Chemical mapping of a 177-nucleotide RNA with DMS and 2A3. Conditions: 150 mM KOAc, 10 mM MgCl2 and 150 mM bicine (pH 8.5), 24 C. 2A3 is a SHAPE reagent: it acylates the 2'-hydroxyl of flexible nucleotides of all four kinds. For DMS the reverse transcriptase was MarathonRT.

[RMDB]
RNA sequence: GGGAACGACUCGAGUAGAGUCGAAAAAGCCAUACCAUUACGAUGGUAUGGCAAGUCCGUGACGGCGAUGGAUCCCGCCUGGCCGAUGCCGAACUGCCGAUCUGGCUGAUGGUUCCUGCCCCGUCAAUUCAGACAGAAGUUUCGACUUCUGUCUGAAAAAAGAAACAACAACAACAAC
Reactivity to DMS in 0.01 (KOAc 150mM, MgCl2 10mM, bicine 150mM(pH8.5), 24C), signal-to-noise 3, nucleotides 027 to 126: a080g020c000c000a000u000a010c000c010a000u010u010a110c230g030a030u000g000g010u000a000u020g000g030c000a000a020g010u010c020c020g000u010g000a050c050g010g020c100g020a160u050g000g000a040u000c010c020c090g020c060c010u000g000g010c040c030g000a100u020g000c040c050g000a070a130c170u020g000c030c010g000a020u010c090u000g020g000c010u020g030a110u010g010g000u000u000c000c000u000g000c050c270c010c000g000u000c090a060a110
Reactivity to 2A3 in 0.01 (KOAc 150mM, MgCl2 10mM, bicine 150mM(pH8.5), 24C), signal-to-noise 5, nucleotides 027 to 126: a000g000c010c000a000u000a010c000c010a000u040u040a040c270g120a010u010g000g000u000a000u000g000g010c000a000a000g010u000c010c010g020u040g020a020c020g000g050c060g030a020u070g010g010a020u050c000c010c000g010c020c020u020g020g000c010c020g050a050u110g090c040c060g130a150a110c090u100g030c020c010g030a070u050c050u100g030g000c030u040g040a100u120g020g000u020u020c000c010u050g050c010c010c000c000g010u000c000a020a090